[RMDB]
RNA sequence: GGGAACGACUCGAGUAGAGUCGAAAAUACAAACUCUUACGCUUUAGCUGCCUAAAAACCAGCUAGCGUGACUUCUACAAGAUUGCUUGUGUCCUGUUAGAAGUCUCAAAAUAGCAAGCUACGGUUACGAAAUUGUCUAGUUUCGUGACAAGAGAUUCAGGGCUAAGACGUUCGCGUCUUAGCCCUGAAAAGAAACAACAACAACAAC
Reactivity to 2A3 in 0.01 (KOAc 150mM, MgCl2 10mM, bicine 150mM(pH8.5), 24C), signal-to-noise 1, nucleotides 027 to 156: u270a010c060a020a170a110c070u090c050u200u100a010c000g000c000u180u290u120a010g000c010u010g000c030c030u050a010a030a020a000a020c040c010a000g030c000u000a010g000c000g010u000g060a000c000u000u040c000u000a000c010a000a000g000a020u080u090g000c000u000u000g000u000g000u000c000c000u000g010u000u010a000g000a000a000g000u000c000u000c040a100a140a030a100u100a060g020c000a000a000g000c000u010a010c010g000g010u030u000a000c000g030a000a000a070u200u120g190u100c070u090a070g060u000u000u000c010g000u020g000a000c030a010a000g020a000g020a010u020u000